[RMDB]
RNA sequence: GGGAACGACUCGAGUAGAGUCGAAAACUGGUCAAUAUUUGCUUGAUAUUUUCAUUACUUGUUCAGAUGACUAGCGUACUACAAGGCAUUGUUAGUACGGCAAGGAGAGAUAAAACGUUCAUGCAAACCUAUGACCACGAUUCGUCGUGGUCAUAGGAAAAGAAACAACAACAACAAC
Reactivity to 2A3 in 0.01 (KOAc 150mM, MgCl2 10mM, bicine 150mM(pH8.5), 24C), signal-to-noise 5, nucleotides 027 to 126: c010u080g060g090u110c010a060a010u040a190u210u030u050g000c000u010u010g000a000u030a100u110u070u020u040c100a100u000u110a090c010u020u010g040u080u080c030a070g070a300u180g000a130c040u080a090g010c010g000u000a000c010u000a000c000a060a030g130g030c120a300u000u020g020u020u000a000g000u000a000c000g020g000c000a000a000g040g010a070g000a020g030a070u100a140a050a010a060c070g090u020u010c030a010u060g000c000a000a040a070
Reactivity to DMS in 0.01 (KOAc 150mM, MgCl2 10mM, bicine 150mM(pH8.5), 24C), signal-to-noise 2, nucleotides 027 to 126: c070u000g020g110u000c020a030a080u040a140u020u000u000g000c000u000u050g000a030u000a040u000u010u000u000c060a040u060u070a150c020u000u010g000u000u010c000a080g000a130u090g000a040c000u050a120g000c020g020u020a000c040u040a000c050a030a030g010g020c300a090u030u000g010u020u000a000g010u000a000c030g040g000c020a010a000g000g000a150g010a180g010a010u030a000a030a030a010c300g000u000u000c000a000u000g010c000a000a040a160

An RNA of 177 nucleotides, treated with 2A3 and DMS and read out base by base. 2A3 is a SHAPE reagent: it acylates the 2'-hydroxyl of flexible nucleotides of all four kinds. The DMS profile rests on 2,052 reads. The data come from the RNA Mapping Database (RMDB), library OK1LIB. For DMS the reverse transcriptase was MarathonRT.